[RMDB]
Chemical mapping of a 177-nucleotide RNA with 2A3 and DMS.
High DMS reactivity at an A or C suggests that its Watson-Crick edge is free.
The DMS profile rests on 8,328 reads.
RNA sequence: GGGAACGACUCGAGUAGAGUCGAAAAGUUGAAGUGUUCGCACUUCAACAAACGCUGAACUCAUGGAGCGCAAGACGAAUAGCUACAUAUUCGACAUGAGAAAAAGACUGUAGUUCGCUACAGUCAAUCAGUGAUUUAAGUUCGCUUAAAUCACUGAAAAAGAAACAACAACAACAAC
Reactivity to 2A3 in 0.01 (KOAc 150mM, MgCl2 10mM, bicine 150mM(pH8.5), 24C), signal-to-noise 7, nucleotides 027 to 126: g000u000u000g000a010a000g000u000g030u070u100c190g050c060a000c000u000u000c000a010a000c000a000a010a000c020g000c020u040g020a120a040c000u000c000a010u020g020g010a010g020c070g010c200a130a050g110a050c020g000a010a010u020a020g050c100u230a090c090a210u050a040u020u010c000g020a020c020a010u020g000a010g020a080a030a010a000a000g000a000c000u000g000u000a000g010u030u050c230g000c090u000a000c000a000g000u000c000a000a030
Reactivity to DMS in 0.01 (KOAc 150mM, MgCl2 10mM, bicine 150mM(pH8.5), 24C), signal-to-noise 6, nucleotides 027 to 126: g010u000u000g010a010a000g020u000g020u000u010c240g030c000a020c000u000u000c000a000a000c000a070a080a170c030g010c020u000g020a100a090c010u000c000a010u000g000g010a030g010c020g010c100a120a090g010a120c020g000a020a010u000a020g000c180u010a120c180a140u010a020u000u000c000g010a090c010a010u000g000a020g010a110a070a090a120a080g000a010c000u000g010u000a010g000u000u010c240g020c000u000a000c000a000g010u000c000a040a040